[RMDB]
Chemical mapping of a 177-nucleotide RNA with DMS and 2A3.
RNA sequence: GGGAACGACUCGAGUAGAGUCGAAAAGGGCAGCUGGCAGAAGCUGUCUGCUCAGUCAUCACUGCCACAUCAAGUAAUUUGUCACAGACUCUCUGGCUGAUUUUUCAGCAAGCUCAUGGACUUGGAGCAUGUCCCGUAGGUUCGCCUACGGGACAUGAAAAGAAACAACAACAACAAC
Reactivity to DMS in 0.01 (KOAc 150mM, MgCl2 10mM, bicine 150mM(pH8.5), 24C), signal-to-noise 2, nucleotides 027 to 126: g020g010g020c000a020g020c010u000g010g020c070a060g010a150a110g030c030u000g020u010c020u010g010c040u000c000a100g010u010c060a060u000c140a100c050u000g010c010c020a090c150a100u010c070a070a060g020u000a080a070u000u010u020g020u010c080a090c090a030g000a080c050u000c100u000c040u000g010g000c000u000g000a060u000u000u000u000u000c010a000g030c020a080a060g010c110u010c020a060u000g010g010a080c060u000u000g000g010a100g020
Reactivity to 2A3 in 0.01 (KOAc 150mM, MgCl2 10mM, bicine 150mM(pH8.5), 24C), signal-to-noise 2, nucleotides 027 to 126: g010g000g000c010a020g000c010u030g080g010c040a030g140a250a000g040c040u050g040u030c010u000g010c010u000c000a000g090u050c010a020u080c020a060c040u040g000c020c000a080c010a090u150c060a100a000g070u110a140a130u030u090u170g090u120c010a060c030a140g040a190c060u070c000u010c050u140g120g000c000u030g060a070u230u110u000u130u040c000a010g000c000a060a000g040c000u040c040a070u110g060g010a040c000u050u180g070g000a040g030
DMS (dimethyl sulfate) methylates the pairing face of unpaired adenines and cytosines. It was measured as part of the RMDB library OK2TRN. Values are in units of 0.01, from 0 to 300, in steps of 10. The reactions ran in a buffer of 150 mM KOAc, 10 mM MgCl2 and 150 mM bicine (pH 8.5), at 24 C.